An RNA of 177 nucleotides, treated with DMS and 2A3 and read out base by base. The 2A3 profile rests on 2,034 reads. For DMS, 2,135 sequencing reads were counted. Values are in units of 0.01, from 0 to 300, in steps of 10. For 2A3 the reverse transcriptase was SuperScript II with manganese. The reactions ran in a buffer of 150 mM KOAc, 10 mM MgCl2 and 150 mM bicine (pH 8.5), at 24 C.
[RMDB]
RNA sequence: GGGAACGACUCGAGUAGAGUCGAAAAUGAAAUAGCGUGUGCAAGACGCUGAUCUUGCCAUGAUCUGGAACUUUAGUGCUGAGGUCCGUGUUCCAGGGUAUCAUGUCGGACCUUAGCACUAAUUAAACGACUCCUAUAGGUUCGCCUAUAGGAGUCGAAAAGAAACAACAACAACAAC
Reactivity to DMS in 0.01 (KOAc 150mM, MgCl2 10mM, bicine 150mM(pH8.5), 24C), signal-to-noise 2, nucleotides 027 to 126: u000g020a110a100a140u000a070g010c000g010u000g010u020g010c000a020a010g000a020c010g030c300u000g000a110u010c020u000u000g010c000c000a010u000g000a080u020c070u000g010g020a150a090c120u000u000u000a010g000u000g010c000u000g000a000g010g010u000c000c000g020u010g020u000u010c140c070a080g000g010g010u010a040u000c060a080u010g000u020c000g010g000a020c010c000u010u000a000g000c010a000c010u000a000a030u000u010a050a030a150
Reactivity to 2A3 in 0.01 (KOAc 150mM, MgCl2 10mM, bicine 150mM(pH8.5), 24C), signal-to-noise 2, nucleotides 027 to 126: u180g000a040a010a050u110a040g020c000g020u020g080u080g000c010a030a020g000a000c050g040c300u080g050a280u000c010u010u020g000c010c000a000u010g040a100u010c000u050g040g030a020a030c030u010u020u000a010g000u010g000c000u000g010a000g000g000u000c000c000g000u030g050u130u070c020c010a020g110g020g030u190a060u240c040a060u140g200u200c010g000g000a000c000c000u000u020a010g000c000a000c000u000a000a000u000u010a050a040a010